Structure probing data (2A3 and DMS) for a 177-nucleotide construct. It was measured as part of the RMDB library OK2TST. For 2A3 the reverse transcriptase was SuperScript II with manganese.
RNA sequence: GGGAACGACUCGAGUAGAGUCGAAAAGUCGUCGUCGAAGGCCAUGCCCGCAAUCGUGACGUCCUUGGUGACCACGAAGUCGUCGGGUGGUGUCUGGAUCUCCACGUGGGGUUUGUCGAGCGAGAGGACCUCACGAAGCGUUCGCGCUUCGUGAGGUAAAAGAAACAACAACAACAAC
Reactivity to 2A3 in 0.01 (KOAc 150mM, MgCl2 10mM, bicine 150mM(pH8.5), 24C), signal-to-noise 2, nucleotides 027 to 126: g070u030c030g010u000c010g010u010c000g050a050a020g000g010c020c000a100u190g060c000c000c000g000c020a030a040u030c010g030u030g050a110c060g020u000c040c030u140u260g300g010u300g060a000c000c010a010c020g010a020a040g240u180c090g050u040c040g000g030g020u050g000g040u090g000u050c040u090g020g010a060u000c000u050c080c010a090c140g080u180g010g020g020g030u070u070u180g100u030c020g000a000g000c060g010a070g020a050g130g000
Reactivity to DMS in 0.01 (KOAc 150mM, MgCl2 10mM, bicine 150mM(pH8.5), 24C), signal-to-noise 2, nucleotides 027 to 126: g000u000c010g010u000c050g000u000c040g010a100a060g000g000c000c010a100u010g000c010c000c000g020c040a200a040u000c010g000u000g000a100c240g020u000c010c010u000u000g050g000u010g010a000c030c020a020c030g030a010a040g010u000c140g020u000c020g010g040g030u000g010g020u000g020u000c050u010g010g000a100u000c060u000c060c040a160c150g020u000g020g010g000g000u000u000u000g010u000c040g000a090g000c040g000a120g000a110g010g000

The RNA was probed in 150 mM KOAc, 10 mM MgCl2 and 150 mM bicine (pH 8.5) at 24 C.